Notes
Chemical mapping of a 177-nucleotide RNA with 2A3 and DMS. For DMS the reverse transcriptase was MarathonRT. It was measured as part of the RMDB library OK2TRN. In probing experiments dimethyl sulfate is read out at A N1 and C N3, which are open when not base-paired. 2A3 adducts were read by reverse transcription with SuperScript II with manganese.
RNA sequence: GGGAACGACUCGAGUAGAGUCGAAAAGUGUCAGUCACACACUCAGUCUCUGUCACAGUCUCAGUGUGAGACUGAGUGACACUCUCUCACACUGAGUGACAGUGACACUCAGUGAGACACUGUGACAGCUCAAUGGAGCGUUCGCGCUCCAUUGAGCAAAAGAAACAACAACAACAAC
Reactivity to 2A3 in 0.01 (KOAc 150mM, MgCl2 10mM, bicine 150mM(pH8.5), 24C), signal-to-noise 2, nucleotides 027 to 126: g080u060g030u050c050a050g030u000c010a020c000a000c000a020c040u060c040a110g000u000c020u000c020u090g030u000c010a040c000a050g140u050c040u000c040a010g010u000g000u020g020a000g000a010c170u070g000a000g000u010g010a000c010a050c020u000c010u010c000u000c000a010c000a000c000u010g030a000g030u050g040a020c000a030g010u000g030a000c000a040c030u100c040a040g010u020g080a020g010a000c020a010c050u030g020u000g020a020c030a020
Reactivity to DMS in 0.01 (KOAc 150mM, MgCl2 10mM, bicine 150mM(pH8.5), 24C), signal-to-noise 2, nucleotides 027 to 126: g000u000g010u020c080a080g020u000c030a020c050a080c070a030c040u000c120a060g020u000c000u000c030u000g000u020c000a000c060a060g000u000c120u010c010a060g000u010g000u000g000a040g010a010c190u020g010a000g010u000g020a110c120a300c010u010c030u000c020u000c000a080c020a030c000u000g000a010g010u000g030a040c010a080g030u000g000a060c000a030c160u020c100a050g030u000g000a060g010a030c030a050c130u000g010u000g020a040c000a140